[RMDB]
RNA sequence: GGGAACGACUCGAGUAGAGUCGAAAAGUUGUGAACUUCGGUUCACAACAAAAAUCCUAAGUCAGCAACAGCGACUAAGAGCAACAGCUCGGAAACGAGACAUGCUCGAUGUCGACAUGCUGAUAUGGAAAAAAAUAUCCGCGUUCGCGCGGAUAAACAUGUUGUUGUGUUUCGACACAACAACAUGAAAAGAAACAACAACAACAAC
Reactivity to DMS in 0.01 (KOAc 150mM, MgCl2 10mM, bicine 150mM(pH8.5), 24C), signal-to-noise 1, nucleotides 027 to 156: g010u000u000g010u000g000a000a000c010u000u020c300g070g020u010u000c000a010c000a020a000c000a000a080a030a100a220u000c010c000u010a040a240g000u000c050a000g110c000a040a070c110a170g010c070g000a000c000u010a300a300g000a020g010c010a010a120c110a250g000c010u000c020g000g000a070a110a300c010g010a050g030a100c010a300u000g000c020u000c000g000a190u000g000u000c000g010a040c080a300u000g000c020u000g020a000u010a040u010g000g020a000a000a000a120a110a060a280u000a000u010c000c000g040c000g060u000u000c300g040c030g050c000g000g000a000u000a000a040a240
Reactivity to 2A3 in 0.01 (KOAc 150mM, MgCl2 10mM, bicine 150mM(pH8.5), 24C), signal-to-noise 3, nucleotides 027 to 156: g000u000u000g000u000g000a000a000c000u030u120c280g090g000u000u030c000a000c000a000a000c000a000a010a010a010a000u020c030c000u050a130a020g020u010c000a020g000c000a040a120c020a210g080c000g000a000c010u040a140a040g010a000g000c000a010a100c040a150g010c010u000c000g040g020a070a080a040c000g000a000g020a050c060a140u050g000c000u000c010g030a040u150g010u000c000g040a090c000a010u050g000c000u020g000a000u010a010u050g030g020a060a110a040a000a040a010a010u090a010u020c000c000g020c020g030u030u040c190g010c000g000c000g040g010a000u020a020a020a010
Structure probing data (DMS and 2A3) for a 207-nucleotide construct. The reactions ran in a buffer of 150 mM KOAc, 10 mM MgCl2 and 150 mM bicine (pH 8.5), at 24 C. For 2A3 the reverse transcriptase was SuperScript II with manganese.